[RMDB]
RNA sequence: GGGAACGACUCGAGUAGAGUCGAAAACUUCAGCCUGAAAGAUGUCAGCUGUACUGGGGUUUUAGUCGCCUGUGCCACAUGGUUGUGUGUCUGCAGCAGGUCCUCAGGACAAAGCCCCCAUGAAAUGCAAACUAACACCUGAGCCCAUCUGACUGCAGUAAAUCCUUUUAUUCGUAAAAGGAUUUACAAAAGAAACAACAACAACAAC
Reactivity to 2A3 in 0.01 (KOAc 150mM, MgCl2 10mM, bicine 150mM(pH8.5), 24C), signal-to-noise 3, nucleotides 027 to 156: c020u080u050c030a010g020c010c010u070g070a100a150a050g060a080u070g030u060c020a000g000c020u050g070u120a080c040u020g000g000g000g000u000u010u000u150a060g010u030c040g020c010c020u020g000u050g000c010c010a060c040a110u100g110g010u030u050g040u010g010u010g030u070c070u050g020c000a030g000c000a000g000g010u020c000c010u060c020a010g020g030a040c070a050a220a030g040c010c000c000c010c020a070u150g080a040a090a040u140g040c040a030a050a060c030u050a070a000c020a030c050c000u000g010a000g040c000c060c020a020u000c010u030g200a300c000u050g010c000a010
Reactivity to DMS in 0.01 (KOAc 150mM, MgCl2 10mM, bicine 150mM(pH8.5), 24C), signal-to-noise 2, nucleotides 027 to 156: c030u000u000c030a090g020c010c000u000g000a110a090a100g010a120u010g010u000c040a100g040c070u000g030u010a090c040u000g030g000g030g020u000u000u010u010a100g010u010c060g030c030c000u010g020u010g020c010c030a060c060a090u000g020g040u000u000g010u010g010u000g010u010c020u000g010c020a020g010c010a020g000g020u000c050c000u020c010a060g010g020a130c070a060a090a160g000c030c000c020c000c030a100u000g000a070a110a090u010g000c080a050a050a080c060u010a080a120c090a140c010c000u010g010a030g020c050c040c030a060u010c010u010g010a100c010u000g020c020a130

Source: RMDB library OK3TST, as collected in RNAgym. This 207-nucleotide RNA was probed chemically with 2A3 and DMS. For DMS the reverse transcriptase was MarathonRT. As a SHAPE reagent, 2A3 marks flexible, mostly unpaired nucleotides at the ribose 2'-OH.